[RMDB]
RNA sequence: GGGAACGACUCGAGUAGAGUCGAAAAGAUAUGGACCAAGGUCGAGGAUCGUGCGUAACAUCCUCUCGGAAACGAGAGGUGGCACGGGAGACCGACGUCCUAAGUCAAACACACGUUCGCGUGUGAACGUAACUGCUCUCUUCGGAGAGCAGUUACGAAAAGAAACAACAACAACAAC
Reactivity to 2A3 in 0.01 (KOAc 150mM, MgCl2 10mM, bicine 150mM(pH8.5), 24C), signal-to-noise 2, nucleotides 027 to 126: g030a030u090a020u170g010g000a000c000c030a070a050g000g000u010c010g040a300g120g050a030u020c000g000u010g000c010g000u040a050a010c010a300u150c010c000u020c010u020c000g030g020a090a060a020c010g000a000g000a000g000g000u010g000g010c040a010c020g000g010g010a020g010a010c010c020g000a010c010g000u000c020c000u010a100a010g100u020c040a080a100a000c010a000c000a010c000g050u090u090c280g000c030g090u060g000u000g100a070a020
Reactivity to DMS in 0.01 (KOAc 150mM, MgCl2 10mM, bicine 150mM(pH8.5), 24C), signal-to-noise 3, nucleotides 027 to 126: g000a040u010a300u000g010g010a020c000c020a100a300g020g010u000c000g000a140g030g000a070u000c030g020u020g000c020g000u010a030a050c260a020u000c000c000u010c000u000c000g000g010a050a130a150c000g020a010g010a020g030g020u000g000g010c000a000c000g010g000g000a050g020a010c000c000g000a300c300g000u000c000c020u010a030a120g000u000c020a120a040a170c020a020c000a030c000g020u000u020c220g030c030g020u000g010u000g000a060a070

Source information: This 177-nucleotide RNA was probed chemically with 2A3 and DMS. It was measured as part of the RMDB library TTRDEL. For DMS the reverse transcriptase was MarathonRT.